[RMDB]
RNA sequence: GGGAACGACUCGAGUAGAGUCGAAAAGAUAUGGACGUUCUGAGUGGAGAGCACAUUUCGGAAACGAAAUGGGCUCUAUGAAGCUCAGAGACGUCCUAAGUCAAAGGUAGCAGUUCGCUGCUACCAAGUCUACCCAGAUGUUCGCAUCUGGGUAGACAAAAGAAACAACAACAACAAC
Reactivity to 2A3 in 0.01 (KOAc 150mM, MgCl2 10mM, bicine 150mM(pH8.5), 24C), signal-to-noise 1, nucleotides 027 to 126: g040a020u090a050u180g010g010a000c020g010u050u040c020u000g000a000g020u050g000g100a050g010a030g040c020a000c000a050u000u040u000c020g020g020a050a060a080c010g030a000a000a000u000g010g040g020c000u000c000u000a040u020g000a000a000g000c000u000c010a000g010a020g000a010c010g000u000c000c000u000a070a000g020u010c060a150a060a120g010g020u020a000g030c010a000g010u060u180c260g160c170u000g000c010u000a000c000c000a010a000
Reactivity to DMS in 0.01 (KOAc 150mM, MgCl2 10mM, bicine 150mM(pH8.5), 24C), signal-to-noise 2, nucleotides 027 to 126: g010a050u020a300u020g000g000a030c000g000u000u000c030u000g010a020g010u000g000g000a010g000a050g000c000a030c000a020u000u000u030c000g000g030a070a100a230c000g000a000a020a020u000g000g010g050c010u000c010u010a000u010g000a170a300g020c020u010c010a000g010a060g030a010c000g000u000c000c000u000a000a030g000u000c030a100a130a200g010g010u000a020g000c000a000g000u000u020c300g040c020u000g000c000u000a000c040c000a010a070